Structure probing data (DMS and 2A3) for a 177-nucleotide construct.
Reactivities are given for positions 27 through 126.
The data come from the RNA Mapping Database (RMDB), library VIROID.
RNA sequence: GGGAACGACUCGAGUAGAGUCGAAAAAGGAAUGGCGGGACCCCACUCUGCAGGGUCCGCGUUCCAUCCUUUCUUACCUGAUGGCCGGCAUGGUCCCAGCCUCCUCGCUGGCGCCGGCUGGGCAACAUCUCUAUGUACUGUUCGCAGUACAUAGAGAAAAAGAAACAACAACAACAAC
Reactivity to DMS in 0.01 (KOAc 150mM, MgCl2 10mM, bicine 150mM(pH8.5), 24C), signal-to-noise 4, nucleotides 027 to 126: a020g000g010a070a020u000g010g010c020g010g020g000a020c010c000c000c070a160c140u010c150u010g040c140a160g030g000g000u000c000c010g020c020g020u000u010c010c000a060u000c010c010u010u000u000c100u010u020a140c060c040u000g010a130u010g000g020c000c010g020g010c020a110u000g040g010u000c300c000c000a010g000c010c100u000c140c120u010c160g020c000u000g010g000c170g010c010c010g020g010c000u000g010g010g000c040a070a080c080a080
Reactivity to 2A3 in 0.01 (KOAc 150mM, MgCl2 10mM, bicine 150mM(pH8.5), 24C), signal-to-noise 3, nucleotides 027 to 126: a020g070g000a110a040u050g260g240c070g010g010g040a030c020c040c000c000a050c110u300c200u240g050c100a040g000g000g030u020c010c000g030c010g040u060u000c000c000a000u010c010c000u030u050u020c060u090u110a120c000c020u090g060a180u140g120g090c000c020g020g000c060a120u170g070g000u050c000c000c000a010g000c000c030u120c040c040u080c070g000c010u010g020g020c020g000c010c030g070g010c020u020g000g010g000c010a080a040c010a090